[RMDB]
RNA sequence: GGGAACGACUCGAGUAGAGUCGAAAAGGGCCUGUCCCAGGUUACCCGCUCCCACGAGACAGGCGAACUGAUCGAUGUCCCAUCGGAGGAAUCGCUCUAUGGCGUGGAUGAGUUCCUGGACAGGGUACGACUGAUGUCACUUCGGUGACAUCAGUCGAAAAGAAACAACAACAACAAC
Reactivity to DMS in 0.01 (KOAc 150mM, MgCl2 10mM, bicine 150mM(pH8.5), 24C), signal-to-noise 1, nucleotides 027 to 126: g000g020g050c010c000u000g060u000c130c030c080a050g010g000u000u010a120c000c060c110g000c050u010c050c000c000a030c060g000a020g000a140c170a040g010g000c000g030a000a220c090u020g000a290u010c000g000a000u000g000u000c070c060c010a300u010c010g000g040a190g000g000a060a170u010c020g010c000u000c030u000a080u000g020g030c010g030u000g000g010a090u020g000a030g000u000u010c000c010u010g000g000a040c060a010g000g000g000u000a070
Reactivity to 2A3 in 0.01 (KOAc 150mM, MgCl2 10mM, bicine 150mM(pH8.5), 24C), signal-to-noise 2, nucleotides 027 to 126: g030g000g140c030c010u000g030u060c100c060c000a020g000g020u050u090a150c000c090c000g010c010u000c010c000c000a000c030g020a030g040a040c080a030g040g010c010g000a030a000c010u060g030a200u220c010g000a010u050g180u200c010c080c000a010u030c030g040g020a030g030g030a150a160u040c000g000c000u040c040u160a090u100g080g020c020g000u000g010g010a090u150g010a000g020u080u040c000c000u000g000g000a000c000a000g030g010g050u070a050
Background:
This 177-nucleotide RNA was probed chemically with DMS and 2A3. The data come from the RNA Mapping Database (RMDB), library OK2TRN. The reactions ran in a buffer of 150 mM KOAc, 10 mM MgCl2 and 150 mM bicine (pH 8.5), at 24 C.